[RMDB]
RNA sequence: GGGAACGACUCGAGUAGAGUCGAAAAAAAAGUUUUGAAGUCUGUUAAGAGGUAUGCAUAGGGCUGAGAAGUUCAUAUACCUGUGGACUUAUAAUUCAUUAGUACCUACUGCCAUUGUCUAUUAUGCGGAACUUAUCUAAUUCGUUAGAUAAGUUCCAAAAGAAACAACAACAACAAC
Reactivity to 2A3 in 0.01 (KOAc 150mM, MgCl2 10mM, bicine 150mM(pH8.5), 24C), signal-to-noise 2, nucleotides 027 to 126: a020a020a000a020g040u090u070u060u050g020a060a010g030u010c010u070g030u190u070a130a020g100a020g130g000u040a010u030g020c040a030u170a110g020g000g000c000u000g010a020g010a050a010g020u000u040c000a020u070a000u040a100c000c090u070g050u020g060g010a000c000u050u000a030u030a170a060u080u030c030a050u020u120a020g040u080a230c000c010u020a050c050u020g050c000c020a120u080u090g030u080c010u040a200u300u040a050u300g060c070
Reactivity to DMS in 0.01 (KOAc 150mM, MgCl2 10mM, bicine 150mM(pH8.5), 24C), signal-to-noise 6, nucleotides 027 to 126: a080a050a080a100g000u000u000u000u000g000a080a080g010u010c040u000g010u010u010a080a090g000a060g000g010u000a010u010g000c170a080u010a070g000g000g010c010u000g010a140g010a090a010g020u000u000c010a050u010a060u010a070c160c110u010g020u000g000g000a010c010u000u000a070u000a060a070u010u000c060a090u000u010a050g010u000a080c010c000u000a030c100u000g010c060c050a110u010u000g010u000c050u010a110u010u000a080u000g020c300
An RNA of 177 nucleotides, treated with 2A3 and DMS and read out base by base. 2A3 adducts were read by reverse transcription with SuperScript II with manganese. It was measured as part of the RMDB library OK2TRN. The 2A3 profile rests on 1,270 reads. Conditions: 150 mM KOAc, 10 mM MgCl2 and 150 mM bicine (pH 8.5), 24 C. DMS adducts were read by reverse transcription with MarathonRT. Values cover nucleotides 27 to 126.